Source information
The data come from the RNA Mapping Database (RMDB), library OK1LIB. An RNA of 177 nucleotides, treated with 2A3 and DMS and read out base by base.
[RMDB]
RNA sequence: GGGAACGACUCGAGUAGAGUCGAAAAGGCAGGAAUAGAAUGGGCCGAAUCUAGUGUGACACUUCAGGCCAAAAGCUAUUUUUGUUUGGCACAAGGCCUGGUGGCUGAAACGGCGGUGUUCAACAAGCAAUAUUAAAUAAUUCGUUAUUUAAUAUUGAAAAGAAACAACAACAACAAC
Reactivity to 2A3 in 0.01 (KOAc 150mM, MgCl2 10mM, bicine 150mM(pH8.5), 24C), signal-to-noise 5, nucleotides 027 to 126: g040g010c040a010g040g080a090a030u080a100g040a050a050u110g020g050g000c000c000g010a010a010u010c020u040a060g060u020g050u070g090a010c000a000c030u070u050c020a020g010g000c010c000a000a120a000a010g000c010u010a060u040u040u010u050u120g240u140u080u080g010g000c010a060c020a060a030g000g010c000c000u000g010g000u000g010g000c020u030g010a030a030a010c010g010g000c000g010g040u030g000u020u040c020a030a030c010a100a010g030
Reactivity to DMS in 0.01 (KOAc 150mM, MgCl2 10mM, bicine 150mM(pH8.5), 24C), signal-to-noise 9, nucleotides 027 to 126: g010g020c040a050g000g000a100a070u020a060g000a070a050u010g000g010g000c010c010g010a050a210u010c040u030a040g020u020g010u020g010a140c030a030c010u010u020c020a020g020g010c000c000a020a040a090a050g000c000u000a010u010u010u020u020u030g010u010u020u010g000g000c010a030c120a130a190g000g000c000c000u010g010g010u000g010g000c020u000g000a030a040a210c060g010g010c030g010g010u000g010u010u010c030a080a070c170a100a080g000
The 2A3 profile rests on 5,959 reads. The DMS profile rests on 45,206 reads. 2A3 adducts were read by reverse transcription with SuperScript II with manganese.